Notes
The data come from the RNA Mapping Database (RMDB), library RFM100. This 177-nucleotide RNA was probed chemically with 2A3. The RNA was probed in 150 mM KOAc, 10 mM MgCl2 and 150 mM bicine (pH 8.5) at 24 C.
RNA sequence: GGGAACGACUCGAGUAGAGUCGAAAAGUUCGGUCCUCUAUCCUCUGUGGGCGUUGGAAAAUUGAGGGGUUCAGACCUUAGUACGAGAGGACCGGGUCUGACGCACCACUGGUGCAUCGGUUGUACUCCAGUGGAUUAGUUUCGACUAAUCCACUGGAAAAGAAACAACAACAACAAC
Reactivity to 2A3 in 0.01 (KOAc 150mM, MgCl2 10mM, bicine 150mM(pH8.5), 24C), signal-to-noise 2, nucleotides 027 to 126: g080u040u050c000g000g000u010c000c030u000c020u030a100u130c010c000u040c040u070g030u250g120g040g000c080g000u050u160g160g020a030a020a100a080u180u110g020a110g000g050g010g000u030u150c040a080g040a110c010c010u020u040a060g060u080a020c130g090a020g010a010g050g000a000c000c000g000g000g000u000c000u010g030a030c040g030c000a070c000c000a230c180u260g010g010u000g020c000a000u010c020g060g000u010u020g020u040a020c010u000